Overview:
The record gives the reactivity of an RNA of 177 nucleotides to 2A3 and DMS. The RNA was probed in 150 mM KOAc, 10 mM MgCl2 and 150 mM bicine (pH 8.5) at 24 C. The 2A3 profile rests on 916 reads. It was measured as part of the RMDB library M2PK90. The DMS profile rests on 817 reads.

[RMDB]
RNA sequence: GGGAACGACUCGAGUAGAGUCGAAAAAGAACUAGCGAUUGUAAAAGGCUGUUUGCGCUAAGAUAAGGAAUUAGCGCAAAUAGGUCCGAAUUCCUUGAUAACAUUUCGGACAACCGCGCUAAAACAAAGUCGGAUAUUAGUUCGCUAAUAUCCGACUAAAAGAAACAACAACAACAAC
Reactivity to 2A3 in 0.01 (KOAc 150mM, MgCl2 10mM, bicine 150mM(pH8.5), 24C), signal-to-noise 1, nucleotides 027 to 126: a000g040a030a010c060u030a020g000c000g090a100u070u190g040u220a030a100a000a030g070g000c000u030g000u000u010u000g010c000g010c020u000a000a000g030a110u080a260a090g140g020a080a120u000u000a000g000c000g000c010a000a000a000u000a000g000g000u010c000c000g000a000a050u050u030c020c080u090u220g110a050u040a100a000c020a120u020u020u030c010g000g040a000c020a030a020c050c050g080c020g000c060u110a090a080a000a000c020a000a230
Reactivity to DMS in 0.01 (KOAc 150mM, MgCl2 10mM, bicine 150mM(pH8.5), 24C), signal-to-noise 1, nucleotides 027 to 126: a030g020a170a080c140u000a040g030c000g020a090u010u010g000u030a060a050a070a180g000g020c000u000g040u000u000u000g010c000g020c030u000a000a000g000a100u000a090a140g020g000a070a090u000u000a000g010c010g020c010a000a000a020u000a000g000g010u000c000c000g000a040a030u010u000c120c100u000u010g050a100u010a110a120c160a050u010u000u000c000g010g010a090c020a050a090c060c050g000c010g000c100u010a020a040a070a020c160a030a090